Chemical mapping of a 177-nucleotide RNA with 2A3 and DMS. It was measured as part of the RMDB library VIROID. For DMS, 3,123 sequencing reads were counted. For 2A3, 2,894 sequencing reads were counted.
RNA sequence: GGGAACGACUCGAGUAGAGUCGAAAACGUUGUGUUUUCCCCAGAGGGGCACUUUUUAUGUGAACUUCUGCAGGUUAAGCUCGGCGCUCAAGAGUUGUAUCCACCGGGUAGUUUCCAACGCCGGCUGGUCUUAAUAAUACUUCGGUAUUAUUAAGACAAAAGAAACAACAACAACAAC
Reactivity to 2A3 in 0.01 (KOAc 150mM, MgCl2 10mM, bicine 150mM(pH8.5), 24C), signal-to-noise 4, nucleotides 027 to 126: c020g030u080u160g130u070g020u130u010u040u090c030c030c000c010a010g000a010g030g000g010g010c000a010c000u290u240u080u160u270a210u300g010u000g010a010a010c000u000u010c000u000g000c070a010g050g060u120u150a050a040g020c030u040c050g110g000c080g050c060u030c070a150a060g020a010g020u050u090g020u110a300u020c020c020a010c120c040g010g010g030u040a070g020u020u060u050c040c010a100a070c070g020c040c020g040g040c080u070g040
Reactivity to DMS in 0.01 (KOAc 150mM, MgCl2 10mM, bicine 150mM(pH8.5), 24C), signal-to-noise 3, nucleotides 027 to 126: c060g020u010u010g000u020g010u000u000u010u000c020c000c130c010a020g010a030g010g010g000g030c000a000c000u010u020u000u020u000a040u010g030u000g010a020a020c000u010u000c000u000g000c130a110g020g000u010u010a080a130g010c040u010c010g020g010c100g010c040u000c080a130a190g000a040g020u000u000g010u000a090u000c000c010a110c120c040g020g000g010u000a050g010u000u000u010c020c020a120a100c130g020c020c030g010g000c110u010g010